[RMDB]
RNA sequence: GGGAACGACUCGAGUAGAGUCGAAAAUUAAGGCACAUAAUUGUGCUUUGAGCUUUGAUUAGAUGUAAUCAAAUACAAUGACAAGAACACUGCACUUUCUUGUGGGACAUCGCUUACAGUGGACCCACAGUACACGGUGGCUCGAAACUGUGCUAUCCACCCUACUCCUAUUCGUAGGAGUAGGGUGAAAAGAAACAACAACAACAAC
Reactivity to 2A3 in 0.01 (KOAc 150mM, MgCl2 10mM, bicine 150mM(pH8.5), 24C), signal-to-noise 5, nucleotides 027 to 156: u130u050a020a020g020g080c030a000c000a010u180a150a210u300u120g000u040g000c040u010u000u000g010a020g010c000u070u070u020g030a040u050u060a080g130a290u210g170u220a030a020u030c000a000a020a040u150a050c090a020a130u120g070a050c020a020a070g040a100a010c030a020c080u050g030c010a040c090u040u110u050c030u090u100g000u020g020g000g000a000c010a070u080c070g030c100u120u110a050c070a080g010u050g050g030a120c010c020c010a000c000a010g000u000a040c040a010c080g010g020u000g020g010c020u000c020g050a020a060a040c070u060g010u020g040c000u030a040u060c010
Reactivity to DMS in 0.01 (KOAc 150mM, MgCl2 10mM, bicine 150mM(pH8.5), 24C), signal-to-noise 2, nucleotides 027 to 156: u000u000a030a040g000g020c000a000c000a090u000a100a220u000u010g070u000g010c010u000u010u000g000a050g010c150u000u010u000g030a020u000u000a140g010a210u010g050u010a040a010u010c010a030a060a090u010a080c130a060a120u000g020a120c030a110a230g020a170a110c020a030c020u000g000c020a050c070u000u000u000c040u010u000g020u000g010g030g020a060c020a030u000c040g000c090u000u000a050c120a090g010u000g020g000a230c030c050c000a000c000a020g020u000a050c100a030c060g000g000u010g000g000c030u000c030g040a130a060a100c060u010g030u000g020c040u000a110u000c040